[RMDB]
RNA sequence: GGGAACGACUCGAGUAGAGUCGAAAAUGCCAUUUAUAUUGUAAUACACUUUUGAGUAUUCUAAAUAUCUGCAUAUAUUGGGAAGCUAAGUAGUACUAUCCCUUAGGAAGCCAUUGUGUAUUUUGCAAAUUGCGAUGUAAUUCGUUACAUCGCAAUUAAAAGAAACAACAACAACAAC
Reactivity to DMS in 0.01 (KOAc 150mM, MgCl2 10mM, bicine 150mM(pH8.5), 24C), signal-to-noise 4, nucleotides 027 to 126: u000g000c010c030a130u020u010u010a100u010a110u020u000g000u020a020a020u000a020c010a030c020u010u010u010u010g010a110g020u000a060u000u000c010u000a070a100a040u000a020u000c130u010g010c110a090u010a080u000a060u000u000g010g020g010a040a070g010c100u010a070a120g030u020a090g020u000a120c050u000a120u000c010c010c000u000u000a100g010g000a040a200g010c040c010a010u000u000g000u000g000u000a040u000u000u000u000g030c100a020
Reactivity to 2A3 in 0.01 (KOAc 150mM, MgCl2 10mM, bicine 150mM(pH8.5), 24C), signal-to-noise 3, nucleotides 027 to 126: u070g050c010c000a020u010u220u060a210u040a040u070u060g000u030a000a030u010a000c000a010c030u060u080u110u040g070a170g050u050a300u150u000c010u040a020a120a070u090a040u020c070u170g040c050a040u090a020u010a060u250u090g010g000g010a010a000g000c040u060a170a000g080u090a030g090u010a220c010u070a210u080c000c030c050u020u030a070g010g020a030a020g000c000c000a000u010u000g010u000g000u010a050u020u020u100u070g080c000a070

Annotation:
Source: RMDB library OK2TST, as collected in RNAgym. Structure probing data (DMS and 2A3) for a 177-nucleotide construct. The RNA was probed in 150 mM KOAc, 10 mM MgCl2 and 150 mM bicine (pH 8.5) at 24 C.